[RMDB]
RNA sequence: GGGAACGACUCGAGUAGAGUCGAAAAUUUAUACAUGGAUGAGGCAUGUACAAUGUUUUGUUCAGUUCAAUUGAGCGUGACGUUGACGUUGGUAUAAAUCAUUUCUCGUUCCAUCUGCAGAAGGGCCAACCCUUUGGUGGGAUCAAGGGCAUUGUGAAGUCGUGAUGAUAUUCGUAUCAUCACGACUAAAAGAAACAACAACAACAAC
Reactivity to DMS in 0.01 (KOAc 150mM, MgCl2 10mM, bicine 150mM(pH8.5), 24C), signal-to-noise 2, nucleotides 027 to 156: u000u000u000a060u010a030c030a140u020g010g010a060u010g040a060g010g030c020a040u000g000u010a110c090a100a050u020g020u010u000u000u020g060u010u000c060a110g000u010u000c120a030a190u000u000g030a080g040c010g000u000g000a050c070g030u010u010g030a030c140g020u000u000g020g020u000a040u000a000a040a060u010c030a160u000u000u000c000u000c060g010u010u000c000c010a120u020c120u010g030c060a080g000a090a100g010g030g030c030c090a060a070c040c000c030u020u000u010g050g050u000g020g020g010a130u010c040a060a080g010g010g020c070a070u000u000g040u010g010a070
Reactivity to 2A3 in 0.01 (KOAc 150mM, MgCl2 10mM, bicine 150mM(pH8.5), 24C), signal-to-noise 3, nucleotides 027 to 156: u030u030u010a130u020a020c050a040u030g060g020a020u060g050a030g000g030c000a010u040g010u090a110c080a110a040u060g010u010u040u050u060g010u030u060c040a070g020u070u100c030a100a170u090u170g030a040g040c080g020u090g020a070c040g020u020u030g000a010c040g000u050u040g030g020u080a070u020a030a030a020u070c050a090u000u050u020c010u010c000g010u030u000c010c030a050u030c110u100g010c020a040g040a040a050g020g020g000c040c040a100a120c050c000c000u040u050u070g040g010u040g000g030g020a030u040c040a010a040g000g000g020c040a040u030u070g020u030g090a080